[RMDB]
RNA sequence: GGGAACGACUCGAGUAGAGUCGAAAACUUAGCUCUAAUACCUGCUCUUUGUAUUUGCUUAAGGGAAGGGAAACGGACUGAUCGUCCACAUAGCCGAUCUUGACCCCGCAAUUGGGACAGAAAACAACGUAUACCUGCCUUUCGAGGCAGGUAUACGAAAAGAAACAACAACAACAAC
Reactivity to DMS in 0.01 (KOAc 150mM, MgCl2 10mM, bicine 150mM(pH8.5), 24C), signal-to-noise 2, nucleotides 027 to 126: c080u020u000a110g000c000u040c020u040a070a040u010a140c030c010u010g010c030u000c010u030u000u060g000u080a140u030u000u040g000c010u030u030a110a030g000g020g020a090a120g000g010g000a040a170a120c100g000g000a100c060u000g010a040u030c110g000u010c000c030a080c250a050u040a100g000c020c040g030a040u010c050u030u000g040a170c000c020c000c080g010c180a030a030u000u000g000g000g020a170c120a120g000a090a060a120a170c130a010a070
Reactivity to 2A3 in 0.01 (KOAc 150mM, MgCl2 10mM, bicine 150mM(pH8.5), 24C), signal-to-noise 5, nucleotides 027 to 126: c020u080u070a020g060c030u050c050u110a160a080u030a090c000c010u020g080c020u030c020u030u040u030g160u170a170u050u170u120g080c030u040u090a020a080g010g010g020a050a040g030g020g060a100a080a020c040g030g030a040c020u060g030a130u090c040g040u010c040c000a030c020a100u120a000g030c050c010g030a020u020c010u030u040g040a070c000c020c000c030g010c040a050a090u090u110g030g000g050a030c020a060g070a000a160a010a020c050a030a010

An RNA of 177 nucleotides, treated with DMS and 2A3 and read out base by base. The DMS profile rests on 2,126 reads. For 2A3, 3,543 sequencing reads were counted. Conditions: 150 mM KOAc, 10 mM MgCl2 and 150 mM bicine (pH 8.5), 24 C. 2A3 is a SHAPE reagent: it acylates the 2'-hydroxyl of flexible nucleotides of all four kinds.